[RMDB]
RNA sequence: GGGAACGACUCGAGUAGAGUCGAAAAGAACACGUGUGAACUCGUGUUCGAGUUCGAGAGAUCGAGAUCUCACACGUGUGAUCUCUCGUUCGAUCUCACGUGUUCUCGAGAACACGAACGAACGAACUCGUUCACACGAGAGAACACGUUCUCUCUCCCUUCCAAGUUCUUUCGAGAACUUGGAAGGAAAAGAAACAACAACAACAAC
Reactivity to 2A3 in 0.01 (KOAc 150mM, MgCl2 10mM, bicine 150mM(pH8.5), 24C), signal-to-noise 4, nucleotides 027 to 156: g020a040a020c050a010c140g010u020g000u020g020a060a020c000u010c020g000u010g000u080u120c000g010a000g000u010u000c010g000a010g010a010g010a140u010c020g000a030g030a150u030c020u020c030a020c000a010c020g030u030g000u000g030a010u000c050u000c040u050c100g170u220u160c120g000a010u010c010u000c000a000c010g010u000g010u100u050c050u050c110g090a070g010a010a030c120a000c160g040a080a000c040g000a040a010c010g000a010a000c020u000c000g040u100u110c080a010c000a000c020g000a000g010a000g020a010a000c010a010c000g000u000u000c000u000c000u000c000u010c000
Reactivity to DMS in 0.01 (KOAc 150mM, MgCl2 10mM, bicine 150mM(pH8.5), 24C), signal-to-noise 1, nucleotides 027 to 156: g000a060a070c000a040c000g000u040g000u010g060a220a300c040u000c000g030u000g030u000u010c030g000a050g010u000u000c010g010a090g030a300g000a030u000c020g040a150g000a130u000c040u000c050a180c100a080c060g040u010g000u030g000a110u000c000u030c150u020c120g020u020u030c070g020a050u000c020u000c020a100c010g010u010g000u000u000c060u000c000g020a080g000a040a170c030a300c020g000a040a080c040g000a200a250c000g000a060a080c030u000c020g030u000u000c070a080c120a060c030g010a060g000a060g000a300a050c010a070c070g020u000u000c030u010c000u000c020u000c030